[RMDB]
RNA sequence: GGGAACGACUCGAGUAGAGUCGAAAAGAUAUGGAUGUAGGAUGUGCCCUUCUCGGAAACGAGAAUGGCACUAAUCCUAAUCCUAAGUCAAAACAAGCAUGUGAGUCUUCGGACUCACAUGCUUGAAGACUGAAUUAUUCUUCGGAAUAAUUCAGUCAAAAGAAACAACAACAACAAC
Reactivity to DMS in 0.01 (KOAc 150mM, MgCl2 10mM, bicine 150mM(pH8.5), 24C), signal-to-noise 3, nucleotides 027 to 126: g000a030u010a300u000g000g000a010u000g010u000a000g010g020a020u000g000u000g000c000c000c050u000u000c000u000c000g010g000a050a110a150c000g000a000g010a020a010u000g000g000c000a010c000u010a040a020u000c000c000u000a050a030u000c000c000u000a040a170g010u000c050a070a080a150a270c020a020a010g020c000a010u000g020u000g000a020g010u000c010u000u010c200g030g010a010c000u000c000a000c000a000u000g000c000u000u000g000a030a110
Reactivity to 2A3 in 0.01 (KOAc 150mM, MgCl2 10mM, bicine 150mM(pH8.5), 24C), signal-to-noise 2, nucleotides 027 to 126: g020a030u040a010u110g030g000a020u070g150u300a010g000g020a020u020g000u000g000c010c000c000u000u000c010u010c000g070g020a080a070a050c010g010a000g000a000a010u000g000g000c000a010c000u000a020a000u000c000c000u000a010a000u000c000c000u010a140a020g050u040c040a000a010a100a210c000a000a010g020c020a010u040g040u020g030a010g020u000c030u090u280c300g050g000a010c000u010c010a000c010a000u000g000c020u000u000g000a010a020

The record gives the reactivity of an RNA of 177 nucleotides to DMS and 2A3.
Reactivities are given for positions 27 through 126.
For 2A3 the reverse transcriptase was SuperScript II with manganese.
For 2A3, 4,149 sequencing reads were counted.